[RMDB]
Annotation
The record gives the reactivity of an RNA of 177 nucleotides to DMS and 2A3. Conditions: 150 mM KOAc, 10 mM MgCl2 and 150 mM bicine (pH 8.5), 24 C. For 2A3 the reverse transcriptase was SuperScript II with manganese.
RNA sequence: GGGAACGACUCGAGUAGAGUCGAAAAGGUUCCGUUCUGGAUUAUCGCCACAUCGGACAAAACCACCGGUUUUGAAAAGAUCGCCUGGCUGCUGGCCAUGAUCUGCCUGAGCUGGUUUGCCUGGGUGCGUUAACAUCUACUUCGGUAGAUGUUAACGAAAAGAAACAACAACAACAAC
Reactivity to DMS in 0.01 (KOAc 150mM, MgCl2 10mM, bicine 150mM(pH8.5), 24C), signal-to-noise 5, nucleotides 027 to 126: g010g000u000u000c010c010g010u010u000c080u000g000g010a120u000u000a070u010c190g010c020c020a050c090a050u010c020g020g010a140c100a060a060a060a080c030c050a120c130c060g010g010u000u000u010u000g000a070a110a130a060g000a030u010c030g010c130c160u000g000g010c020u000g010c190u010g000g020c010c020a060u000g000a060u000c060u000g000c210c040u000g000a090g010c040u000g010g000u000u010u010g010c000c010u000g010g010g010u000g020
Reactivity to 2A3 in 0.01 (KOAc 150mM, MgCl2 10mM, bicine 150mM(pH8.5), 24C), signal-to-noise 4, nucleotides 027 to 126: g050g000u070u020c000c010g030u060u000c070u070g050g030a090u140u130a100u300c100g020c040c000a050c010a050u060c020g020g020a010c040a020a140a020a050c020c030a040c060c100g040g020u050u060u050u150g150a170a140a020a010g040a040u030c020g040c030c030u030g020g010c010u050g050c060u090g070g000c000c010a050u080g030a100u030c050u100g100c020c020u050g010a040g000c030u020g000g000u120u180u180g020c010c010u070g050g000g040u070g010